Source: RMDB library RNAMAK, as collected in RNAgym. The record gives the reactivity of an RNA of 207 nucleotides to DMS and 2A3. DMS adducts were read by reverse transcription with MarathonRT. For 2A3, 5,773 sequencing reads were counted.
[RMDB]
RNA sequence: GGGAACGACUCGAGUAGAGUCGAAAAGGGGUCGUGCAAGGUCCCUUGGAUUUAUACGCAGGCUUACUGAAGCCUCCACGGUAAGCUAGUGCGUAUUGUCAGGGACUGAUGACCACGACGGAGGCACCCAAAACGGCGCAGUUUCGACUGCGCCGAACGUUAUAUAAGAGUUCGCUCUUAUAUAACGAAAAGAAACAACAACAACAAC
Reactivity to DMS in 0.01 (KOAc 150mM, MgCl2 10mM, bicine 150mM(pH8.5), 24C), signal-to-noise 2, nucleotides 027 to 156: g000g020g000g020u000c000g080u000g030c140a130a270g000g000u000c000c000c000u000u020g010g010a070u010u000u010a070u000a020c010g070c020a300g000g010c000u000u010a000c000u020g000a050a130g000c050c010u000c020c030a270c030g000g000u000a010a020g000c030u000a060g040u010g010c010g070u000a020u000u010g000u010c070a070g030g000g010a060c000u010g000a090u010g000a130c150c010a040c030g000a090c040g000g020a080g080g050c010a140c020c000c010a060a050a120a210c000g000g000c020g010c000a020g000u000u000u000c300g010a080c020u010g030c000g030c000c000g000a010a020
Reactivity to 2A3 in 0.01 (KOAc 150mM, MgCl2 10mM, bicine 150mM(pH8.5), 24C), signal-to-noise 4, nucleotides 027 to 156: g060g020g030g020u000c010g000u030g020c060a120a150g020g010u020c000c000c000u010u040g020g000a030u050u300u180a110u020a020c000g010c040a060g030g000c000u010u000a000c010u050g040a090a020g020c000c000u000c010c010a020c010g010g010u000a010a010g000c020u050a100g290u040g050c010g010u020a040u020u130g130u100c070a030g000g000g010a000c000u010g020a100u080g010a040c040c000a000c000g010a000c030g000g010a000g000g010c000a020c000c000c000a020a050a020a040c030g000g000c010g000c000a020g000u020u070u220c200g140a030c020u000g000c000g030c000c000g000a010a000

The reactions ran in a buffer of 150 mM KOAc, 10 mM MgCl2 and 150 mM bicine (pH 8.5), at 24 C.